[RMDB]
RNA sequence: GGGAACGACUCGAGUAGAGUCGAAAACUGACAAUGCUCAGGGAUUUGGUAUUUUGCUGGCAUUCUCUCGGGUACUAGGUUGGCUGAGAAAAUUGUAGUGGAUUUUAAAUGACAUGAAAGUCCUGAGGAUAGCACCAGGAUUCGUCCUGGUGCUAUCAAAAGAAACAACAACAACAAC
Reactivity to DMS in 0.01 (KOAc 150mM, MgCl2 10mM, bicine 150mM(pH8.5), 24C), signal-to-noise 1, nucleotides 027 to 126: c020u000g010a050c100a060a070u010g000c050u000c000a050g010g020g000a090u000u000u000g000g000u000a050u000u000u000u000g030c040u000g000g040c090a120u000u010c050u000c050u000c010g010g000g010u000a030c060u000a140g040g020u010u000g000g020c020u010g010a080g000a040a020a050a080u000u000g000u000a120g010u000g000g010a090u000u010u000u010a030a050a100u010g000a110c100a030u020g010a020a070a080g030u000c010c020u010g010a120g000
An RNA of 177 nucleotides, treated with DMS and read out base by base. For DMS, 1,072 sequencing reads were counted. Reactivities are given for positions 27 through 126. The RNA was probed in 150 mM KOAc, 10 mM MgCl2 and 150 mM bicine (pH 8.5) at 24 C.